Structure probing data (2A3 and DMS) for a 177-nucleotide construct. Conditions: 150 mM KOAc, 10 mM MgCl2 and 150 mM bicine (pH 8.5), 24 C. It was measured as part of the RMDB library OK1LIB.
RNA sequence: GGGAACGACUCGAGUAGAGUCGAAAACAAACAAAGCCAGCGAUGUCCUAGCUCGAAAGAAAGCCAACAUGGCAGAACAAAUCGAGCUCGUGCAAGGAGGGCACGAAUUAACGCUGGCACAAACAAACGCUAUCAUGAGCUUCGGCUCAUGAUAGCGAAAAGAAACAACAACAACAAC
Reactivity to 2A3 in 0.01 (KOAc 150mM, MgCl2 10mM, bicine 150mM(pH8.5), 24C), signal-to-noise 3, nucleotides 027 to 126: c030a020a200a030c040a060a120a030g010c000c000a000g010c000g030a070u100g030u030c030c060u020a000g000c020u000c000g000a030a020a000g080a070a000a000g000c030c010a040a060c090a300u290g000g000c040a020g080a020a010c000a000a020a100u020c000g000a000g000c010u000c000g000u020g030c020a080a090g140g020a010g030g100g000c020a000c010g050a030a050u150u090a050a020c010g000c000u000g000g020c010a000c000a020a000a000c020a030a040a000
Reactivity to DMS in 0.01 (KOAc 150mM, MgCl2 10mM, bicine 150mM(pH8.5), 24C), signal-to-noise 1, nucleotides 027 to 126: c070a020a030a060c300a030a180a290g000c000c000a000g000c000g070a000u000g000u000c000c130u070a010g000c000u000c000g000a040a030a210g000a000a300a130g000c000c000a000a260c300a000u060g040g000c000a110g040a000a060c180a000a070a130u000c020g000a020g000c000u000c040g050u000g000c000a020a110g020g220a150g090g000g000c020a000c000g000a110a090u020u000a040a110c140g000c020u000g000g000c070a000c120a060a140a070c300a060a070a110